[RMDB]
RNA sequence: GGGAACGACUCGAGUAGAGUCGAAAAAGCCGAGGACUACGGUCCUCGGCAACAACCGUCACAACGGCUUCCUGGCGUGACGGGGUUAACCCCAACGGAGCAAGUGCGAGCUUACGAGCGCGCACAAUUUAGGAGAAUUCCUUCGGGAAUUCUCCAACGUCACCAUAUUGUUCGCAAUAUGGUGACGAAAAGAAACAACAACAACAAC
Reactivity to 2A3 in 0.01 (KOAc 150mM, MgCl2 10mM, bicine 150mM(pH8.5), 24C), signal-to-noise 1, nucleotides 027 to 156: a000g020c010c010g010a000g010g010a010c030u040a040c300g040g030u000c000c000u000c000g020g110c000a000a000c020a000a000c000c000g010u000c000a000c000a010a010c030g020g000c010u250u170c030c020u010g070g000c000g000u000g010a000c010g000g000g000g000u150u180a090a110c000c000c000c000a010a080c090g050g000a030g010c070a270a050g050u000g000c000g000a000g070c030u100u080a090c210g070a020g000c030g010c030g050c030a000c020a030a010u100u190u180a080g000g000a000g000a000a000u000u020c040c020u050u130c270g070g000g000a000a000u000u000c000u000c000c000a000a000

Notes:
The record gives the reactivity of an RNA of 207 nucleotides to 2A3. As a SHAPE reagent, 2A3 marks flexible, mostly unpaired nucleotides at the ribose 2'-OH.